[RMDB]
RNA sequence: GGGAACGACUCGAGUAGAGUCGAAAAAAAUGAAAAGAUACAAGCGGUCUACGAAGAAGUCAUCGGCGCCGUCUAGUUAGAACCAAGGGAUGGCCGGACUGCGCGAGCUGCGCGUAGAAGAGUGGCCUCAUGUUAUCCGAUACCAUCCGGACUGGGACUUCUUACUAUCGUUCGCGAUAGUAAGAAGAAAAGAAACAACAACAACAAC
Reactivity to 2A3 in 0.01 (KOAc 150mM, MgCl2 10mM, bicine 150mM(pH8.5), 24C), signal-to-noise 2, nucleotides 027 to 156: a000a000a000u170g050a130a070a030a050g100a030u160a150c060a090a000g000c020g000g010u000c030u070a080c030g020a020a030g050a020a000g090u100c050a070u050c090g020g000c030g010c040c030g030u010c010u020a010g030u080u080a030g020a090a030c030c020a040a020g030g000g010a020u010g010g000c030c010g010g010a010c000u030g000c000g030c000g010a070g040c150u200g050c070g000c020g000u090a020g030a120a030g030a050g050u050g040g030c050c000u050c010a010u110g040u110u100a020u000c000c010g000a020u050a100c000c010a000u000c000c000g000g040a000c030u010g010g000g030a000
Reactivity to DMS in 0.01 (KOAc 150mM, MgCl2 10mM, bicine 150mM(pH8.5), 24C), signal-to-noise 1, nucleotides 027 to 156: a000a090a090u000g000a070a050a090a130g000a170u000a060c070a090a110g010c000g000g020u000c020u000a110c080g000a060a110g030a090a100g020u000c040a140u010c010g020g020c070g040c020c010g000u000c020u010a080g020u010u000a060g000a110a190c020c070a030a090g030g000g000a070u010g020g030c030c000g010g010a080c030u000g010c020g030c010g020a070g020c040u020g030c020g020c060g050u010a140g020a080a110g000a070g040u020g000g000c000c050u000c040a030u000g000u000u000a060u010c020c020g000a210u010a040c020c000a050u000c000c030g000g030a200c160u000g010g040g000a210